Chemical mapping of a 207-nucleotide RNA with 2A3 and DMS. For 2A3 the reverse transcriptase was SuperScript II with manganese.

RNA sequence: GGGAACGACUCGAGUAGAGUCGAAAAGGGGUCAUCUUUUGACGACGGACAGUAGGCUGAUGACCCUGAAGCCUCCACGGGCAAGGCCUACCGUCCGUCGAUAAGAUGACGGAGGCACCCAAAGGCUUCUUACCCUCUUCGGAGGGUAAGAAGCCAACAACUUGUUAGAGUUCGCUCUAACAAGUUGAAAAGAAACAACAACAACAAC
Reactivity to 2A3 in 0.01 (KOAc 150mM, MgCl2 10mM, bicine 150mM(pH8.5), 24C), signal-to-noise 1, nucleotides 027 to 156: g050g000g070g030u000c000a000u010c010u060u140u110u110g260a180c040g000a000c000g000g000a000c000a010g000u030a010g000g010c010u000g020a090u220g140a270c000c010c020u030g000a020a010g030c000c040u110c080c020a060c020g000g000g000c010a030a020g010g010c000c000u000a000c020c000g000u010c000c010g010u000c000g010a000u000a000a000g000a000u000g000a020c010g000g000a010g020g000c040a040c020c000c020a030a080a060g000g020c000u000u000c000u000u000a000c010c000c000u010c020u070u050c200g070g000a030g000g000g020u000a000a000g000a000a000g000c000c000a000a000
Reactivity to DMS in 0.01 (KOAc 150mM, MgCl2 10mM, bicine 150mM(pH8.5), 24C), signal-to-noise 1, nucleotides 027 to 156: g000g010g010g030u020c000a000u000c000u000u000u010u000g000a200c100g000a040c010g010g030a030c030a060g000u000a030g010g000c020u020g000a130u010g000a230c110c020c000u010g000a030a130g000c070c030u000c040c010a300c300g030g000g000c000a120a220g010g010c000c000u000a020c020c010g020u000c000c000g000u010c010g000a030u000a030a040g000a060u010g020a050c000g010g020a120g030g050c090a160c030c030c000a060a160a140g060g040c000u000u000c000u010u000a050c000c000c050u020c020u000u010c300g060g040a060g010g050g000u000a000a000g000a080a010g040c040c000a000a050
It was measured as part of the RMDB library RNAMAK. The reactions ran in a buffer of 150 mM KOAc, 10 mM MgCl2 and 150 mM bicine (pH 8.5), at 24 C. The DMS profile rests on 2,456 reads.